[RMDB]
The record gives the reactivity of an RNA of 207 nucleotides to DMS and 2A3. For 2A3, 3,398 sequencing reads were counted. The DMS profile rests on 1,955 reads. It was measured as part of the RMDB library OK3TST.
RNA sequence: GGGAACGACUCGAGUAGAGUCGAAAAGAUAUGAUGGCUUAGCUUGGGCUCAGAGGCCUGACAUGGGAGGCUUAGGCAGGAGGAUUGCCUGAGACCAGGAGUUUGAGAACAGCCUGGGCAAAUUAGUCAGAUGUGGUUUCUUGAGCAUAUAGACCUAGUCAUGAUUAUGAUUCGUCAUAAUCAUGACAAAAGAAACAACAACAACAAC
Reactivity to DMS in 0.01 (KOAc 150mM, MgCl2 10mM, bicine 150mM(pH8.5), 24C), signal-to-noise 1, nucleotides 027 to 156: g010a150u000a020u000g010a180u000g020g020c040u010u020a170g050c000u010u010g060g050g010c040u000c020a080g000a090g030g060c050c000u000g010a050c080a120u000g010g010g010a050g020g010c010u010u000a020g040g020c000a050g030g020a240g030g020a140u000u000g070c000c010u000g020a080g000a000c060c010a050g030g010a300g040u010u010u020g000a120g000a080a190c090a070g050c020c020u010g000g000g000c060a070a070a100u000u000a080g060u010c010a100g020a130u010g010u000g000g040u000u000u000c060u000u020g010a110g050c070a100u000a100u000a220g000a130c020c090u010a090
Reactivity to 2A3 in 0.01 (KOAc 150mM, MgCl2 10mM, bicine 150mM(pH8.5), 24C), signal-to-noise 4, nucleotides 027 to 156: g060a050u190a060u230g070a040u070g050g000c040u070u070a020g010c010u070u040g030g010g000c010u010c050a040g050a030g090g040c020c040u050g030a020c010a100u110g030g010g020a070g060g000c000u040u030a020g010g010c010a000g030g070a060g050g060a140u120u070g000c000c000u010g020a030g010a070c000c010a010g050g020a080g030u070u140u120g100a100g020a040a020c030a030g020c000c000u010g000g020g000c040a070a100a090u100u070a030g020u040c030a010g010a140u070g040u030g060g000u030u020u010c020u060u080g040a060g020c060a030u110a020u020a180g070a060c000c040u020a020